[RMDB]
RNA sequence: GGGAACGACUCGAGUAGAGUCGAAAAAGGUUCAUUUGCUUGUAAGUAUCCUUACGUAUAUCUUCAUGGUUUGGACAAUAUGGGUAGUAAGGUAAACUAUUCCUCAGUAAGCGCCAUGGCUUUGCUCGUGCUAUCCGUGAUUCGUCACGGAUAGCACAAAAGAAACAACAACAACAAC
Reactivity to 2A3 in 0.01 (KOAc 150mM, MgCl2 10mM, bicine 150mM(pH8.5), 24C), signal-to-noise 2, nucleotides 027 to 126: a010g030g000u090u050c030a070u050u120u220g000c020u110u110g050u100a070a010g020u020a120u030c000c030u010u000a020c000g050u070a090u030a030u220c070u050u040c020a060u030g090g020u100u000u120g140g010a120c080a250a190u180a100u100g020g070g030u000a030g020u030a080a000g060g030u050a020a020a000c030u040a030u070u060c000c000u000c000a020g040u040a020a010g000c000g020c050c040a040u010g010g050c000u080u050u050g050c050u060c050
Reactivity to DMS in 0.01 (KOAc 150mM, MgCl2 10mM, bicine 150mM(pH8.5), 24C), signal-to-noise 2, nucleotides 027 to 126: a070g000g010u010u000c020a090u000u010u010g020c050u000u010g010u010a130a060g000u010a100u010c000c030u000u000a040c090g020u000a160u010a080u010c040u010u010c010a020u020g000g010u000u010u040g020g010a120c130a080a100u020a110u020g020g000g010u000a080g030u000a030a030g010g020u010a060a060a020c060u010a150u000u010c020c010u000c160a100g020u010a040a060g030c050g000c020c030a050u000g010g000c100u000u000u020g020c100u000c170